[RMDB]
RNA sequence: GGGAACGACUCGAGUAGAGUCGAAAAUGGACAAGACGCCAAAGCUCACAGCGGUCGAAAUCGACCCAGCCAUGGCGCGGCGUCUACAAGAGCGCUAUGGGGAGCAGGCACGCAUCAUCAACGGCGAAGCCCCUCCGAUGUUCGCAUCGGAGGGGCUAAAAGAAACAACAACAACAAC
Reactivity to 2A3 in 0.01 (KOAc 150mM, MgCl2 10mM, bicine 150mM(pH8.5), 24C), signal-to-noise 1, nucleotides 027 to 126: u090g000g090a000c000a080a010g000a050c110g010c000c000a070a080a040g000c000u050c030a030c000a000g070c220g060g000u000c010g110a300a000a110u300c020g030a030c010c000c000a000g040c020c010a060u000g000g030c000g000c000g000g000c010g010u020c000u000a000c030a010a090g010a030g000c000g010c000u000a050u120g000g070g030g000a000g050c040a000g030g000c000a020c050g040c000a140u120c010a010u060c000a070a030c090g000g000c050g000a030
Reactivity to DMS in 0.01 (KOAc 150mM, MgCl2 10mM, bicine 150mM(pH8.5), 24C), signal-to-noise 1, nucleotides 027 to 126: u040g000g000a100c200a070a010g010a130c030g000c000c000a000a190a110g060c090u110c040a300c300a120g070c180g000g000u000c000g020a000a110a020u110c050g000a020c010c000c000a260g010c020c050a050u000g020g010c000g050c100g000g000c090g000u020c060u000a100c060a030a130g000a040g000c050g000c120u000a090u090g000g000g000g000a000g000c080a020g000g000c010a050c020g000c020a000u000c080a230u000c210a000a110c110g000g000c000g000a030

Overview
This 177-nucleotide RNA was probed chemically with 2A3 and DMS. The DMS profile rests on 1,077 reads. The data come from the RNA Mapping Database (RMDB), library OK1LIB. Reactivities are given for positions 27 through 126. The reactions ran in a buffer of 150 mM KOAc, 10 mM MgCl2 and 150 mM bicine (pH 8.5), at 24 C. For 2A3 the reverse transcriptase was SuperScript II with manganese.